[RMDB]
RNA sequence: GGGAACGACUCGAGUAGAGUCGAAAACGAUCAGUACGUUCGCGUACUGAUCGAAGCUACUGGAGACAGUAGCAAGUCUAAGACCUUGUUAAGCGGAAACAAGGAAAAAUGGAGGAAGGUCGGACCUCCAUACUUAGACAACCGCUAACCGGCCAAAUACCUGAUGGAGUUUCGACUCCAUCAGGUAAAAAGAAACAACAACAACAAC
Reactivity to 2A3 in 0.01 (KOAc 150mM, MgCl2 10mM, bicine 150mM(pH8.5), 24C), signal-to-noise 2, nucleotides 027 to 156: c010g010a000u000c000a000g000u030a000c030g060u040u100c260g010c000g080u030a000c000u000g000a000u000c000g000a000a000g000c000u020a010c000u000g010g030a040g010a050c000a000g000u000a000g010c000a000a030g000u060c000u000a000a030g000a100c000c000u020u010g000u040u080a100a120g160c050g110g060a070a010a000c010a000a010g000g000a040a250a050a010a000u010g010g000a000g040g000a200a200g020g000u050c090g010g120a290c010c000u000c010c000a000u020a010c010u000u000a000g000a000c050a060a030c050c010g030c120u020a010a040c010c000g000g000c000c000a000a090a000